An RNA of 177 nucleotides, treated with DMS and 2A3 and read out base by base. DMS adducts were read by reverse transcription with MarathonRT. For DMS, 2,221 sequencing reads were counted. As a SHAPE reagent, 2A3 marks flexible, mostly unpaired nucleotides at the ribose 2'-OH.
RNA sequence: GGGAACGACUCGAGUAGAGUCGAAAAAUAAGUACUUCUCUGGUGCUAUGGAAACAGCCGCUUAUCGUGAAGCUGCAGCAUGUCAUCUUGCUAAAGCCUUACAAACAUACAGCGAGACUGGUAGUGACAGUGUUUAUACCUUCGGGUAUAAACACUGAAAAGAAACAACAACAACAAC
Reactivity to DMS in 0.01 (KOAc 150mM, MgCl2 10mM, bicine 150mM(pH8.5), 24C), signal-to-noise 3, nucleotides 027 to 126: a090u010a040a030g010u000a050c060u000u010c070u010c060u010g000g020u010g010c020u000a070u000g040g000a080a070a150c020a010g000c020c000g020c020u000u000a020u000c190g010u000g020a020a060g010c010u010g000c300a050g020c010a020u000g030u000c210a080u010c050u000u000g020c020u000a070a220a060g030c000c020u000u010a030c080a090a090a110c200a060u010a040c180a040g000c000g000a060g010a160c020u000g010g010u000a020g010u000g000a230
Reactivity to 2A3 in 0.01 (KOAc 150mM, MgCl2 10mM, bicine 150mM(pH8.5), 24C), signal-to-noise 2, nucleotides 027 to 126: a000u090a050a000g030u030a040c010u040u120c020u000c080u180g060g030u070g010c010u010a020u070g070g110a160a080a000c010a020g000c000c000g000c000u030u030a040u090c070g020u020g050a010a000g010c000u010g000c000a010g000c000a020u010g030u140c050a090u050c100u010u000g000c030u020a040a040a000g000c020c030u040u060a010c020a030a150a000c020a050u140a000c070a010g040c020g000a050g070a140c030u010g000g090u050a040g040u020g070a020